[RMDB]
RNA sequence: GGGAACGACUCGAGUAGAGUCGAAAAUGUGUGAUUUGCCAUGUUUGUGGAGAAUGGAAUAUGAAAUUACUGAGUCUUGGCCAUCCACGAUCUUUCACACUAGGCAGGGAGAUAAGACAGACCCACAAAUAAUGAUAAUAAGCAGUGAAAUGUAACAAAUUAAGGGCAUAUUCGUAUGCCCUUAAUUAAAAGAAACAACAACAACAAC
Reactivity to DMS in 0.01 (KOAc 150mM, MgCl2 10mM, bicine 150mM(pH8.5), 24C), signal-to-noise 3, nucleotides 027 to 156: u000g020u000g030u000g010a050u000u000u000g010c050c050a110u010g020u000u010u010g000u010g000g020a080g020a110a100u000g000g010a110a200u000a150u010g000a050a080a120u010u000a200c120u010g020a140g020u000c030u000u000g010g000c010c020a210u000c010c030a100c040g010a090u000c050u010u000u000c030a090c070a120c050u000a110g010g010c060a090g010g010g010a110g020a110u000a090a070g030a120c060a100g000a120c030c000c020a030c030a030a040a090u000a000a070u000g010a090u000a020a100u000a070a100g020c010a040g010u010g010a060a070a120u000g010u000a060a090c120a110
Reactivity to 2A3 in 0.01 (KOAc 150mM, MgCl2 10mM, bicine 150mM(pH8.5), 24C), signal-to-noise 3, nucleotides 027 to 156: u060g010u040g000u000g010a060u020u060u120g070c030c030a110u110g090u030u050u030g020u020g010g040a070g050a160a220u100g020g060a070a090u140a040u150g060a030a060a080u200u130a200c120u120g000a010g040u010c030u020u020g060g010c010c000a030u000c010c010a000c020g030a070u030c010u000u050u080c020a020c010a020c040u020a040g000g000c030a030g100g000g000a060g010a000u130a150a000g010a010c010a020g100a050c000c030c000a020c000a000a060a000u130a000a060u060g070a000u040a140a020u080a240a000g010c020a020g040u020g040a040a040a040u110g020u130a090a010c000a110